Annotation:
This 177-nucleotide RNA was probed chemically with DMS and 2A3. Conditions: 150 mM KOAc, 10 mM MgCl2 and 150 mM bicine (pH 8.5), 24 C. The 2A3 profile rests on 3,605 reads.
RNA sequence: GGGAACGACUCGAGUAGAGUCGAAAACGCGUCAGAUUCGUCUGACGCGAAAGCAUAGAACAGCGCUAUCAUGUAUUAUAGUACUAUGCAACUAUAGCGCUAAAACGAUACCGUUCGCGGUAUCGAAGGUAUACACGGGUUUCGACCCGUGUAUACCAAAAGAAACAACAACAACAAC
Reactivity to DMS in 0.01 (KOAc 150mM, MgCl2 10mM, bicine 150mM(pH8.5), 24C), signal-to-noise 2, nucleotides 027 to 126: c000g040c000g010u000c000a000g000a000u000u010c200g020u000c000u010g000a020c010g000c010g000a000a040a070g020c120a070u020a110g000a080a100c190a020g050c020g030c000u010a020u000c140a150u000g010u000a000u010u010a100u000a100g000u010a070c110u000a040u000g000c100a040a130c210u000a020u000a010g000c010g040c000u000a010a010a080a120c040g000a020u000a000c010c000g010u000u000c080g000c010g000g020u000a000u000c000g000a030a000
Reactivity to 2A3 in 0.01 (KOAc 150mM, MgCl2 10mM, bicine 150mM(pH8.5), 24C), signal-to-noise 3, nucleotides 027 to 126: c000g010c010g000u000c000a000g000a010u030u100c130g060u000c070u000g000a000c000g000c000g020a000a000a000g000c000a060u070a180g110a110a050c040a080g000c000g000c020u010a010u050c030a040u050g040u040a050u120u110a130u150a090g130u050a060c050u050a020u030g030c010a020a000c020u060a010u010a020g000c000g020c050u070a000a040a000a040c010g000a000u000a010c020c000g020u030u030c260g000c020g050g000u000a000u000c000g000a040a020